[RMDB]
The record gives the reactivity of an RNA of 207 nucleotides to 2A3. 2A3 adducts were read by reverse transcription with SuperScript II with manganese. 2A3 is a SHAPE reagent: it acylates the 2'-hydroxyl of flexible nucleotides of all four kinds. Reactivities are given for positions 27 through 156. Source: RMDB library RSTRND, as collected in RNAgym.
RNA sequence: GGGAACGACUCGAGUAGAGUCGAAAACACUCGCUGCCUAAGUAGCGACUGCGUGUCUGUCAGUCCGGGUUCGCCCUCGGCCCGGGUACUGGCAUCAGCUAGAGGGCUUUACCGUUCGACUCGGUCGCGGAGUCGAACGGGACAACCAACAGCGACUCAUGACAUCUCUGUUCGCAGAGAUGUCAUGAAAAGAAACAACAACAACAAC
Reactivity to 2A3 in 0.01 (KOAc 150mM, MgCl2 10mM, bicine 150mM(pH8.5), 24C), signal-to-noise 2, nucleotides 027 to 156: c020a010c010u000c010g040c020u040g010c000c090u300a300a120g010u060a010g050c010g030a040c050u130g060c070g030u060g030u030c030u040g010u020c000a010g000u000c000c010g000g000g010u010u010c070g010c000c000c000u000c010g000g030c010c000c030g000g000g000u030a020c000u010g000g020c030a160u090c030a070g150c010u130a040g000a000g010g010g000c000u020u050u020a010c000c000g000u000u000c000g000a000c000u000c000g010g000u010c000g000c000g000g000a000g000u000c000g000a000a000c010g000g000g000a000c000a000a040c130c140a020a030c000a010g000c000g000a000c010u010